[RMDB]
Conditions: 150 mM KOAc, 10 mM MgCl2 and 150 mM bicine (pH 8.5), 24 C. An RNA of 177 nucleotides, treated with 2A3 and DMS and read out base by base. For 2A3, 1,634 sequencing reads were counted. For 2A3 the reverse transcriptase was SuperScript II with manganese.
RNA sequence: GGGAACGACUCGAGUAGAGUCGAAAAGUGGUUAUUUGCCAAGAUAUGUCCGGUGGCGAUAACCAGGGCGACCGGCCAGUCGAUGAGUUCGAGGGCAGCGAGUGCCGCCAGACCUCCGUAGUAGGCCGACGUACGACGAUUUCGAUCGUCGUACGUCAAAAGAAACAACAACAACAAC
Reactivity to 2A3 in 0.01 (KOAc 150mM, MgCl2 10mM, bicine 150mM(pH8.5), 24C), signal-to-noise 3, nucleotides 027 to 126: g090u000g000g000u030u020a020u050u050u300g020c000c000a050a000g080a050u260a070u300g200u130c090c090g120g080u050g000g000c000g000a030u010a010a010c000c000a000g010g010g070c020g000a040c000c020g010g020c000c000a030g060u000c010g060a110u120g070a080g080u040u010c000g010a050g030g020g020c010a040g040c040g090a100g100u100g080c010c070g010c010c000a010g020a100c000c010u000c000c010g000u040a050g070u020a010g140g000c020c000
Reactivity to DMS in 0.01 (KOAc 150mM, MgCl2 10mM, bicine 150mM(pH8.5), 24C), signal-to-noise 1, nucleotides 027 to 126: g040u010g000g010u000u000a010u000u000u010g050c000c000a080a090g000a060u010a050u090g000u020c100c120g000g030u000g000g020c060g000a010u000a000a000c000c000a020g000g000g000c000g040a120c050c020g010g020c020c010a300g000u000c010g000a040u020g010a080g010u000u000c000g000a160g000g000g010c000a010g010c170g000a150g000u030g030c030c000g030c030c000a140g010a060c070c000u000c010c100g020u020a010g000u000a080g010g020c000c070
Source: RMDB library OK1LIB, as collected in RNAgym.
DMS adducts were read by reverse transcription with MarathonRT.
Values cover nucleotides 27 to 126.
As a SHAPE reagent, 2A3 marks flexible, mostly unpaired nucleotides at the ribose 2'-OH.
For DMS, 1,910 sequencing reads were counted.